An RNA of 177 nucleotides, treated with 2A3 and DMS and read out base by base.
It was measured as part of the RMDB library OK2TST.
Reactivities are given for positions 27 through 126.
[RMDB]
RNA sequence: GGGAACGACUCGAGUAGAGUCGAAAAUCUUUCACAGUUACCUCGUUGAUCGAUUGCAAUGCAAACUUCACCGCUCCACAGCGUUCCCUAAACGCCUCCUCAUCAAAGACGUAACGUGGAAUCGGUACCCAGGUAAAAUAUUCGUAUUUUACCUGGGAAAAGAAACAACAACAACAAC
Reactivity to 2A3 in 0.01 (KOAc 150mM, MgCl2 10mM, bicine 150mM(pH8.5), 24C), signal-to-noise 4, nucleotides 027 to 126: u000c010u010u050u050c020a020c010a090g030u070u090a080c020c020u080c060g030u040u080g020a040u040c040g020a040u030u090g030c070a050a080u090g010c020a040a090a090c030u090u060c070a030c040c010g010c020u010c020c010a040c020a030g030c010g030u030u020c000c010c000u060a110a170a020c030g020c000c010u010c000c010u020c020a080u010c010a000a070a000g020a010c020g020u030a050a000c030g000u030g010g000a040a050u130c030g000g000u010a040
Reactivity to DMS in 0.01 (KOAc 150mM, MgCl2 10mM, bicine 150mM(pH8.5), 24C), signal-to-noise 4, nucleotides 027 to 126: u000c030u010u000u000c030a050c060a120g010u010u010a060c050c070u000c050g030u000u010g010a050u000c100g010a070u010u000g010c070a070a070u010g020c070a060a060a100c110u000u000c070a050c050c030g010c190u000c020c010a040c100a120g000c020g000u000u010c000c000c000u000a050a110a060c100g000c020c020u000c020c020u000c070a040u000c100a060a070a080g010a040c100g000u000a050a070c090g000u000g010g010a040a050u010c040g000g010u000a200